[RMDB]
RNA sequence: GGGAACGACUCGAGUAGAGUCGAAAACACUGCAGGAGAGAGAAGUGGGAGACUUGGUCAGGAGAAGCAGGUUUGUGAACAGAAGCCUUUUUGGCAGAGCCUGCAGGGACUCUCCAACCCCCAGGCUCACCCACAGUCCUGCUGAAGCCUCCCUCACCAAUAUAUAGGGUUUCGACCCUAUAUAUUGAAAAGAAACAACAACAACAAC
Reactivity to DMS in 0.01 (KOAc 150mM, MgCl2 10mM, bicine 150mM(pH8.5), 24C), signal-to-noise 2, nucleotides 027 to 156: c020a090c030u000g020c100a060g010g000a020g020a170g020a200g000a120a100g030u000g000g020g000a160g010a050c040u000u000g000g020u000c080a180g010g000a100g020a100a130g000c020a030g000g010u000u000u000g030u010g000a060a300c140a150g010a080a150g000c000c030u000u010u030u000u000g020g030c010a300g000a030g010c000c000u010g000c090a100g020g000g000a110c050u000c030u000c020c020a060a140c070c040c060c030c020a080g000g000c000u010c020a050c030c000c000a050c040a090g000u000c000c010u010g030c040u000g030a050a080g020c030c030u000c020c000c010u000c050a120c170
Reactivity to 2A3 in 0.01 (KOAc 150mM, MgCl2 10mM, bicine 150mM(pH8.5), 24C), signal-to-noise 2, nucleotides 027 to 156: c030a000c010u050g000c020a020g030g010a050g010a010g000a020g030a300a050g060u050g020g000g000a030g010a030c030u020u020g050g000u040c080a080g040g020a050g010a070a000g000c000a020g000g020u030u090u030g030u060g070a140a070c100a200g170a290a050g000c020c000u070u280u190u230u210g020g000c010a020g000a000g010c010c000u020g030c010a020g010g020g030a040c030u010c010u000c080c000a000a080c010c020c010c000c010a000g010g020c000u020c040a030c010c010c000a010c000a020g030u000c000c000u000g000c010u000g030a040a000g010c010c040u000c010c010c000u000c020a070c020
Annotation
Structure probing data (DMS and 2A3) for a 207-nucleotide construct. The 2A3 profile rests on 1,365 reads. Source: RMDB library OK3TST, as collected in RNAgym. DMS (dimethyl sulfate) methylates the pairing face of unpaired adenines and cytosines.